The record gives the reactivity of an RNA of 207 nucleotides to 2A3 and DMS. Conditions: 150 mM KOAc, 10 mM MgCl2 and 150 mM bicine (pH 8.5), 24 C. DMS (dimethyl sulfate) methylates the pairing face of unpaired adenines and cytosines. Source: RMDB library OK3TST, as collected in RNAgym. For DMS the reverse transcriptase was MarathonRT. For 2A3 the reverse transcriptase was SuperScript II with manganese. The 2A3 profile rests on 2,250 reads.
[RMDB]
RNA sequence: GGGAACGACUCGAGUAGAGUCGAAAACAGUCAGGCUACAUGGGGUCAGGGACCCACUUGAGGAGGCAUUCUGUCUGUUCUCAGAGCUCAAACGCUGUGCUGGGAGAACCACUACUCUCUUCAGAGCUGUCAGACAGGGACGUUAAAGUCUGCAGAAUGAAUCAUUAACAUUCGUGUUAAUGAUUCAAAAAGAAACAACAACAACAAC
Reactivity to 2A3 in 0.01 (KOAc 150mM, MgCl2 10mM, bicine 150mM(pH8.5), 24C), signal-to-noise 3, nucleotides 027 to 156: c030a010g090u090c020a000g040g000c040u060a070c050a110u160g000g040g000g040u050c070a140g080g000g050a050c010c000c040a080c060u050u070g040a060g030g040a020g020g040c030a030u140u060c020u010g020u000c010u020g080u140u020c040u020c050a100g020a010g010c020u060c100a150a120a110c120g010c140u110g060u100g070c000u020g000g020g000a030g020a060a030c020c010a050c030u100a060c000u040c000u000c000u110u100c030a010g010a020g030c010u050g070u120c020a000g010a020c020a030g010g030g030a010c030g000u030u140a110a010a000g010u010c010u030g010c030a010g110a120a130
Reactivity to DMS in 0.01 (KOAc 150mM, MgCl2 10mM, bicine 150mM(pH8.5), 24C), signal-to-noise 2, nucleotides 027 to 156: c040a100g000u010c000a060g000g010c010u000a090c070a090u000g010g040g010g000u000c020a130g010g040g000a200c020c020c020a040c060u000u010g000a110g030g010a080g040g020c030a110u010u000c020u000g040u000c040u000g020u000u000c050u010c020a180g010a090g020c010u000c040a120a090a210c120g000c060u010g010u000g020c020u000g030g010g010a050g000a070a130c070c090a110c070u000a080c010u000c010u000c030u030u000c080a070g000a100g020c030u010g020u010c040a050g000a070c030a040g020g010g030a100c040g020u000u000a040a080a080g000u000c020u000g010c010a080g000a100a180